[RMDB]
The record gives the reactivity of an RNA of 177 nucleotides to 2A3 and DMS. For 2A3 the reverse transcriptase was SuperScript II with manganese.

RNA sequence: GGGAACGACUCGAGUAGAGUCGAAAAGCCGCCGAAGUCACCAUCACUGGCGGCCAUCGGGUGCACCUGGUUCGAUGGAAUGUCGACGUGAUUGAGCAACGCCCGCCGGGCCUGCUUGAGAUUGCGCACAUACGUCAAGAUUCGUCUUGACGUAUGUAAAAGAAACAACAACAACAAC
Reactivity to 2A3 in 0.01 (KOAc 150mM, MgCl2 10mM, bicine 150mM(pH8.5), 24C), signal-to-noise 6, nucleotides 027 to 126: g000c000c000g000c030c010g150a110a020g050u050c030a050c150c010a050u060c020a020c070u070g010g000c000g010g000c000c000a070u070c040g060g000g000u080g020c040a060c050c030u070g120g010u100u060c020g000a020u020g010g230a100a100u210g090u100c030g010a090c030g020u040g020a060u050u070g020a010g020c010a030a080c030g010c000c010c030g080c080c070g010g020g000c010c000u030g010c000u040u010g010a030g020a090u020u100g000c030g000c020
Reactivity to DMS in 0.01 (KOAc 150mM, MgCl2 10mM, bicine 150mM(pH8.5), 24C), signal-to-noise 9, nucleotides 027 to 126: g010c030c020g020c010c020g010a130a100g010u000c070a100c070c040a040u010c100a090c080u010g010g010c020g010g010c000c040a020u000c080g010g000g010u000g010c070a100c040c030u000g010g010u000u010c060g010a060u000g000g000a140a080u010g010u010c030g010a140c030g010u000g000a060u000u010g010a040g010c020a050a080c270g000c020c010c020g010c160c140g010g020g010c020c030u000g010c010u000u000g010a100g020a060u000u000g010c030g010c120